Chemical mapping of a 177-nucleotide RNA with 2A3 and DMS. The 2A3 profile rests on 5,509 reads. The RNA was probed in 150 mM KOAc, 10 mM MgCl2 and 150 mM bicine (pH 8.5) at 24 C. It was measured as part of the RMDB library M2PK90. High 2A3 reactivity points to a flexible backbone, as in loops and unpaired stretches.
[RMDB]
RNA sequence: GGGAACGACUCGAGUAGAGUCGAAAAUCAUUGGCUUCGCUGCGCGCUGCGUUGCCUAGGCUUCAGAUGCUUCGUACUGUUGGCAACGUUGCAAUUUCCAAACGCUAAUGCGAAAGUGUGCAAACAAAUAUUUGGGAUUAUUCGUAAUCCCAAAUAUAAAAGAAACAACAACAACAAC
Reactivity to 2A3 in 0.01 (KOAc 150mM, MgCl2 10mM, bicine 150mM(pH8.5), 24C), signal-to-noise 4, nucleotides 027 to 126: u090c020a040u010u150g120g010c010u020u020c010g000c020u040g000c020g000c000g000c010u000g010c000g010u000u010g000c000c000u020a040g050g000c000u100u100c070a060g020a300u130g070c010u100u130c080g100u100a130c050u100g280u300u050g030g000c010a010a000c010g010u000u020g000c000a010a080u050u060u000c020c000a070a020a030c030g010c010u110a130a040u120g000c020g040a080a030a070g050u070g020u040g060c040a050a130a140c050a030a300
Reactivity to DMS in 0.01 (KOAc 150mM, MgCl2 10mM, bicine 150mM(pH8.5), 24C), signal-to-noise 9, nucleotides 027 to 126: u010c090a110u010u010g010g020c040u000u000c050g010c040u000g020c150g020c080g030c010u000g010c010g020u000u000g010c000c000u000a100g000g010c060u010u000c130a120g020a120u010g010c120u000u010c110g020u000a100c110u010g000u000u000g010g010c010a020a020c010g010u000u000g010c040a090a090u000u000u000c050c060a070a080a120c070g010c020u000a050a110u000g000c020g000a040a050a080g020u000g010u000g000c100a080a070a080c150a060a080